Conditions: 150 mM KOAc, 10 mM MgCl2 and 150 mM bicine (pH 8.5), 24 C. This 177-nucleotide RNA was probed chemically with DMS and 2A3. For 2A3 the reverse transcriptase was SuperScript II with manganese. For DMS the reverse transcriptase was MarathonRT.
RNA sequence: GGGAACGACUCGAGUAGAGUCGAAAAGCACUGUUGAUCAUGGUGUCCAAAAAUAGUUAAUGUGGCUAAAUUGAGACAGGUUAUGCUUCCAUCACAGUAUGCAUAUUGCAGUGGUGACAAUGAGACCCGCAUUCUGUCUCUUCGGAGACAGAAUGCGAAAAGAAACAACAACAACAAC
Reactivity to DMS in 0.01 (KOAc 150mM, MgCl2 10mM, bicine 150mM(pH8.5), 24C), signal-to-noise 1, nucleotides 027 to 126: g080c000a090c000u000g060u000u000g130a030u010c110a000u000g080g000u000g010u010c000c020a000a070a010a140a080u060a210g040u000u000a070a010u050g090u050g000g000c130u000a180a110a060u000u000g000a300g000a070c050a020g000g050u000u010a050u060g010c000u000u000c300c000a000u000c080a090c000a120g080u000a190u070g020c000a000u000a040u050u020g000c000a070g000u000g000g060u000g000a110c300a110a180u000g010a060g000a020c060c080
Reactivity to 2A3 in 0.01 (KOAc 150mM, MgCl2 10mM, bicine 150mM(pH8.5), 24C), signal-to-noise 2, nucleotides 027 to 126: g000c000a000c010u010g040u010u050g080a120u040c000a000u000g020g080u060g060u100c000c010a020a010a040a030a010u140a050g170u140u210a150a080u300g140u150g000g000c000u010a140a010a280u030u010g000a030g000a050c010a020g020g060u030u000a140u060g000c040u020u000c000c000a030u090c000a010c020a030g190u090a170u110g060c010a000u080a110u300u210g020c040a000g050u000g000g020u010g040a030c100a010a070u070g010a020g030a050c000c000